The record gives the reactivity of an RNA of 177 nucleotides to DMS and 2A3. The reactions ran in a buffer of 150 mM KOAc, 10 mM MgCl2 and 150 mM bicine (pH 8.5), at 24 C. DMS adducts were read by reverse transcription with MarathonRT. High 2A3 reactivity points to a flexible backbone, as in loops and unpaired stretches. It was measured as part of the RMDB library TTRDES.
[RMDB]
RNA sequence: GGGAACGACUCGAGUAGAGUCGAAAAGAUAUGGACUUCCCUUCAGCCUAGACCCAGCUUACUAUCGGAAACGAUAGAAGCUGCUAGGCUGGGAAGUCCUAAGUCAAAACGCAGCUUCGGCUGCGAAGAUCCAACUGCAGUUCGCUGCAGUUGGAUCAAAAGAAACAACAACAACAAC
Reactivity to DMS in 0.01 (KOAc 150mM, MgCl2 10mM, bicine 150mM(pH8.5), 24C), signal-to-noise 1, nucleotides 027 to 126: g000a020u030a300u000g000g000a010c010u000u010c040c000c200u000u010c300a030g010c000c000u000a030g070a250c180c300c100a000g040c000u000u000a140c000u010a000u000c000g000g000a080a040a180c000g000a040u000a010g000a040a030g060c000u000g000c000u000a000g050g000c000u010g000g000g000a000a010g010u000c000c020u000a010a090g000u000c020a140a050a280a170c010g040c000a000g000c010u000u010c200g030g000c000u020g000c020g000a020a040
Reactivity to 2A3 in 0.01 (KOAc 150mM, MgCl2 10mM, bicine 150mM(pH8.5), 24C), signal-to-noise 1, nucleotides 027 to 126: g030a030u120a080u140g000g010a010c010u040u030c000c000c000u000u230c170a020g010c000c000u030a050g000a210c070c070c110a010g000c000u060u230a300c000u150a000u040c020g110g000a220a030a040c010g020a000u010a010g000a010a000g050c000u010g030c030u030a010g040g010c010u010g010g030g040a020a000g000u000c010c000u020a000a000g000u000c020a000a190a060a080c010g000c000a010g020c000u120u110c240g260g040c000u000g010c000g000a000a010